[RMDB]
RNA sequence: GGGAACGACUCGAGUAGAGUCGAAAAGAAUCGGUUGUAAGCGUGGUGUCUCGUGAUCAGCUCAUUAAGCCCACUUAGAUAUGCUACGCUGUAUUUGGGACUAACCUCGGGUGUUGGUUUGGGUAUGCUAAACAACUAUCUUCGGAUAGUUGUUUAGAAAAGAAACAACAACAACAAC
Reactivity to DMS in 0.01 (KOAc 150mM, MgCl2 10mM, bicine 150mM(pH8.5), 24C), signal-to-noise 9, nucleotides 027 to 126: g010a080a090u000c070g010g010u000u000g010u000a100a050g010c020g030u000g010g010u000g010u010c030u010c300g020u000g000a050u000c180a100g010c060u000c140a100u010u010a070a080g010c010c140c030a040c060u000u010a090g010a060u000a040u010g020c050u000a030c040g000c010u000g010u000a050u000u000u010g010g010g010a110c080u010a070a090c080c020u000c070g010g010g000u000g010u000u000g000g010u000u000u000g010g010g000u000a070u010g010
Reactivity to 2A3 in 0.01 (KOAc 150mM, MgCl2 10mM, bicine 150mM(pH8.5), 24C), signal-to-noise 3, nucleotides 027 to 126: g060a030a070u120c050g060g020u070u080g060u130a080a000g030c020g030u020g030g020u020g020u020c000u020c020g020u020g000a080u090c060a010g000c020u010c070a150u080u200a070a020g000c030c000c000a010c020u020u100a030g030a060u090a030u180g020c000u020a010c010g000c000u020g040u060a080u070u050u080g060g000g020a020c010u030a040a040c020c020u030c070g080g010g010u070g040u090u140g030g040u050u050u040g040g010g020u060a050u130g030